[RMDB]
RNA sequence: GGGAACGACUCGAGUAGAGUCGAAAACAGGAGAAGGGUUUUCAGCCCAGCACUGCACAUCUGAUCAAACUGCUGAGCAAGAAAAAGGAAGCCCUGGAGCCUGGAGGCUGCGUCCGGUGUGGGCUGCGGGGCCUGGAGCGGCAGGGCGGCUCCGGGACACGUAGGCGAUAUUCGUAUCGCCUACGUGAAAAGAAACAACAACAACAAC
Reactivity to 2A3 in 0.01 (KOAc 150mM, MgCl2 10mM, bicine 150mM(pH8.5), 24C), signal-to-noise 4, nucleotides 027 to 156: c010a010g020g050a040g040a090a050g010g020g000u010u020u040u060c040a020g000c010c010c000a010g010c030a010c020u160g020c090a040c020a120u120c110u150g120a170u140c090a090a110a120c070u050g000c000u030g020a010g010c030a060a120g120a210a130a040a020a020g030g010a030a010g000c000c000c000u030g010g030a020g040c000c010u050g040g020a050g060g040c040u080g020c040g060u030c020c030g000g050u120g020u070g030g040g000c050u090g030c050g040g000g000g020c000c000u010g010g000a020g020c020g040g000c060a070g060g060g000c040g010g000c010u000c000c000g000g000g010a020
Reactivity to DMS in 0.01 (KOAc 150mM, MgCl2 10mM, bicine 150mM(pH8.5), 24C), signal-to-noise 2, nucleotides 027 to 156: c060a060g020g000a180g000a200a070g040g020g010u010u000u010u000c040a240g030c010c010c000a040g070c010a050c060u010g040c100a080c120a140u010c050u020g010a210u000c060a100a090a110c080u000g000c010u000g010a040g030c010a110a140g010a060a100a050a160a170g000g000a060a080g000c000c000c010u000g020g010a150g010c030c000u000g020g020a070g020g020c020u000g030c030g000u010c000c040g000g040u000g010u010g010g030g000c050u000g010c030g000g010g020g020c010c000u010g020g000a090g010c050g000g000c010a070g030g030g000c050g000g010c020u000c010c010g000g030g020a200